[RMDB]
RNA sequence: GGGAACGACUCGAGUAGAGUCGAAAACGACUUUUUGAUUUUGGAUAGGUUCAGACUUCGCGUGUCCUUUAUGUUUUUUUCUGAAUCGUAAUAAAUUGGUGCCAAAACAAAGGGUGGUCCGAAGCUGCGAUAAGAUUACAUUCGUGUAAUUUUAUCGAAAAGAAACAACAACAACAAC
Reactivity to DMS in 0.01 (KOAc 150mM, MgCl2 10mM, bicine 150mM(pH8.5), 24C), signal-to-noise 7, nucleotides 027 to 126: c080g000a050c040u010u020u010u000u000g000a140u000u010u000u000g000g010a080u010a070g010g000u000u000c000a020g000a060c190u000u000c080g020c050g010u000g010u010c050c040u010u010u030a050u040g000u000u000u010u010u010u010u000c010u010g000a010a020u000c020g020u020a050a090u030a040a070a090u030u010g010g020u020g000c030c030a010a020a010a040c040a020a010a030g000g000g010u000g000g000u010c030c020g000a060a070g010c120u020g000
Reactivity to 2A3 in 0.01 (KOAc 150mM, MgCl2 10mM, bicine 150mM(pH8.5), 24C), signal-to-noise 9, nucleotides 027 to 126: c020g040a030c010u040u030u030u030u020g190a260u040u020u010u020g040g020a050u050a130g020g010u000u020c000a010g010a050c040u070u070c100g010c020g060u050g060u140c040c000u100u190u070a150u090g090u040u050u030u040u010u040u020c010u000g020a020a020u010c020g040u110a060a080u110a120a170a080u070u110g110g020u100g050c000c010a000a020a010a010c000a020a030a000g020g000g000u030g020g000u000c000c000g030a060a020g050c070u080g020